[RMDB]
RNA sequence: GGGAACGACUCGAGUAGAGUCGAAAAAGUAUUGGCGACAAUUUUAUCUAAAAUUGUCUUUUUGUUGACUUGUAAAAUUAUUUGUCUAUUUAAAAAGGAUGUACAUUUAGAUAUGCCCAUAAAGUAUCGCUGGAUAUACUUUCGAGUAUAUCCAGCGAAAAGAAACAACAACAACAAC
Reactivity to 2A3 in 0.01 (KOAc 150mM, MgCl2 10mM, bicine 150mM(pH8.5), 24C), signal-to-noise 2, nucleotides 027 to 126: a000g090u070a110u110u030g030g010c050g000a030c080a010a030u000u120u100u050a030u030c020u040a000a020a060a040u040u120g010u000c010u010u030u000u000u020g020u020u080g000a010c040u050u050g050u160a030a110a070a220u300u110a160u050u160u060g020u000c000u020a090u020u190u280a050a050a000a000a000g030g000a010u050g030u100a080c040a190u050u000u000a000g010a000u000a010u070g030c000c000c000a030u140a120a220a000g060u050a050u080
Record summary
An RNA of 177 nucleotides, treated with 2A3 and read out base by base. Conditions: 150 mM KOAc, 10 mM MgCl2 and 150 mM bicine (pH 8.5), 24 C. It was measured as part of the RMDB library OK1LIB. For 2A3 the reverse transcriptase was SuperScript II with manganese. Values cover nucleotides 27 to 126. Reactivities are rounded to 0.1 and cut off at 0 and 3.